[RMDB]
RNA sequence: GGGAACGACUCGAGUAGAGUCGAAAAGGAGUUAAGUUCGCUUAACUCCCACUACCGAGAAUGCGACUCGGUAUAUCGCUAUAACCCUUGGAAACAAGGGAACCACUGACGACUUCGGUCGUCAGAAUCAUGCUCUUUCGUUCGCGAAAGAGCAUGAAAAAGAAACAACAACAACAAC
Reactivity to DMS in 0.01 (KOAc 150mM, MgCl2 10mM, bicine 150mM(pH8.5), 24C), signal-to-noise 1, nucleotides 027 to 126: g020g000a000g020u010u000a000a010g030u000u000c190g030c010u000u000a010a010c000u000c000c000c050a080c060u000a060c000c000g000a060g000a090a050u020g030c270g010a140c010u000c010g000g000u000a010u010a070u000c120g040c090u000a080u010a040a110c000c000c000u000u000g000g000a140a100a200c020a000a000g000g010g010a040a050c170c220a100c020u000g000a000c000g020a000c000u000u040c130g020g010u000c010g000u000c000a000g010a050a060
Reactivity to 2A3 in 0.01 (KOAc 150mM, MgCl2 10mM, bicine 150mM(pH8.5), 24C), signal-to-noise 1, nucleotides 027 to 126: g000g000a020g000u010u010a000a000g010u050u080c170g040c100u010u000a000a000c000u000c020c000c020a050c010u020a000c000c010g000a000g030a080a190u260g120c100g100a050c000u000c000g000g030u000a000u030a010u020c010g050c180u100a060u090a300a120c000c000c000u000u000g030g030a030a040a030c010a000a010g000g000g000a010a010c030c040a040c040u000g010a000c000g000a010c000u000u010c180g080g020u000c000g000u000c000a000g000a000a040
The record gives the reactivity of an RNA of 177 nucleotides to DMS and 2A3. The RNA was probed in 150 mM KOAc, 10 mM MgCl2 and 150 mM bicine (pH 8.5) at 24 C.